An RNA of 177 nucleotides, treated with DMS and 2A3 and read out base by base. For 2A3, 878 sequencing reads were counted. DMS (dimethyl sulfate) methylates the pairing face of unpaired adenines and cytosines. Conditions: 150 mM KOAc, 10 mM MgCl2 and 150 mM bicine (pH 8.5), 24 C. The data come from the RNA Mapping Database (RMDB), library OK2TRN.
[RMDB]
RNA sequence: GGGAACGACUCGAGUAGAGUCGAAAAACAAAUUAAAAGCAUUUUUCAUAUGCUAAUCUCCACCUGCACAGGAAUAAUUUUUUUUAAGGAGGCAGUCUACUGGCAGAGCAAAUUCAAGAGCUAUCAGCGUACAUAUCAGGUUCGCCUGAUAUGUACGAAAAGAAACAACAACAACAAC
Reactivity to DMS in 0.01 (KOAc 150mM, MgCl2 10mM, bicine 150mM(pH8.5), 24C), signal-to-noise 2, nucleotides 027 to 126: a030c060a090a060a100u000u020a080a090a110a070g010c010a030u000u010u030u000u010c110a100u030a030u000g000c030u000a080a150u020c090u010c020c030a150c110c020u000g010c110a060c060a060g010g010a060a050u000a030a010u000u000u000u000u000u000u000u010a050a090g000g000a070g000g020c080a070g010u000c090u000a060c080u000g010g010c070a020g000a100g000c070a010a030a060u000u000c090a040a050g000a060g000c070u000a060u020c080a090g000
Reactivity to 2A3 in 0.01 (KOAc 150mM, MgCl2 10mM, bicine 150mM(pH8.5), 24C), signal-to-noise 1, nucleotides 027 to 126: a010c100a020a160a070u190u270a100a110a040a040g030c020a030u040u050u120u230u300c090a060u180a020u300g000c000u000a020a170u020c010u020c010c010a040c000c050u030g000c090a100c020a020g040g030a040a050u190a060a020u130u000u030u060u030u050u050u100a090a120g100g000a060g000g000c010a020g030u000c020u080a040c040u060g010g020c000a000g010a010g070c070a060a130a030u100u040c010a030a000g030a000g080c010u010a020u100c000a010g180